[RMDB]
RNA sequence: GGGAACGACUCGAGUAGAGUCGAAAAGAAAGAAAGAAAGAAUACAUGAUCCGUGCUUGAGGUUGCUAUUUUUUGAAAGACGAACAAUAAUAGUACGCGAAUACGCGGGAGUAAAUGCUUUUCUCAACAUUGCUCGAAACUUCGGUUUCGAGCAAUGAAAAGAAACAACAACAACAAC
Reactivity to 2A3 in 0.01 (KOAc 150mM, MgCl2 10mM, bicine 150mM(pH8.5), 24C), signal-to-noise 2, nucleotides 027 to 126: g080a000a030a020g050a010a150a000g110a040a020a000g130a010a060u180a060c010a010u100g120a140u050c000c020g030u000g020c220u090u090g020a050g070g030u020u020g000c000u000a020u020u090u000u000u020u070g200a130a100a100g150a060c150g070a120a060c000a020a000u030a040a000u000a000g000u000a000c020g000c000g120a000a050u030a040c000g010c000g000g000g030a030g030u120a000a060a020u060g010c000u090u110u000u000c070u000c000a000a020
Reactivity to DMS in 0.01 (KOAc 150mM, MgCl2 10mM, bicine 150mM(pH8.5), 24C), signal-to-noise 1, nucleotides 027 to 126: g000a040a070a150g000a070a150a140g040a070a000a100g000a080a100u000a110c040a110u020g000a210u000c000c000g000u000g020c210u030u030g000a180g060g000u050u000g040c000u000a000u000u030u070u000u080u100g000a080a110a000g050a020c220g000a080a030c050a010a000u000a030a050u000a060g000u000a060c050g050c000g020a070a030u000a160c050g020c030g000g030g030a080g000u030a050a100a060u000g000c150u000u000u000u000c000u040c050a000a300